[RMDB]
RNA sequence: GGGAACGACUCGAGUAGAGUCGAAAAAGAGCCGACGAACCUUCCAACCUUCCAACCUUCCAACCUUCCAACCUUCCUACCUUCCAAUCUACUCGAGAGGAGGAGGAGGAGGAGGAGGAGGACAUAAUUAGGUGUAUUGUUUCGACAAUACACCUAAAAAAGAAACAACAACAACAAC
Reactivity to DMS in 0.01 (KOAc 150mM, MgCl2 10mM, bicine 150mM(pH8.5), 24C), signal-to-noise 2, nucleotides 027 to 126: a160g010a100g020c010c030g000a070c090g000a110a100c070c020u000u000c010c030a070a110c120c030u010u000c040c030a090a170c040c030u000u000c020c050a080a070c060c050u000u000c000c010a080a080c050c020u020u000c000c020u010a100c040c000u000u020c020c060a110a160u000c010u010a040c090u000c070g030a020g020a260g020g000a100g000g000a100g000g010a150g000g000a140g030g000a090g000g000a120g000g020a080g000g010a300c180a050u010a030a100
Reactivity to 2A3 in 0.01 (KOAc 150mM, MgCl2 10mM, bicine 150mM(pH8.5), 24C), signal-to-noise 2, nucleotides 027 to 126: a000g120a030g080c000c000g000a070c060g000a020a030c000c020u030u000c020c050a050a070c010c030u070u020c000c030a060a050c060c040u040u030c010c020a090a110c050c000u050u000c010c040a060a050c010c000u070u050c010c020u040a230c010c000u100u030c020c010a060a050u060c000u040a080c050u040c100g000a030g020a040g030g020a010g020g040a000g020g020a050g000g000a060g000g020a020g030g010a020g010g020a010g000g020a000c030a060u300a090a180
An RNA of 177 nucleotides, treated with DMS and 2A3 and read out base by base. The RNA was probed in 150 mM KOAc, 10 mM MgCl2 and 150 mM bicine (pH 8.5) at 24 C. For DMS, 1,310 sequencing reads were counted.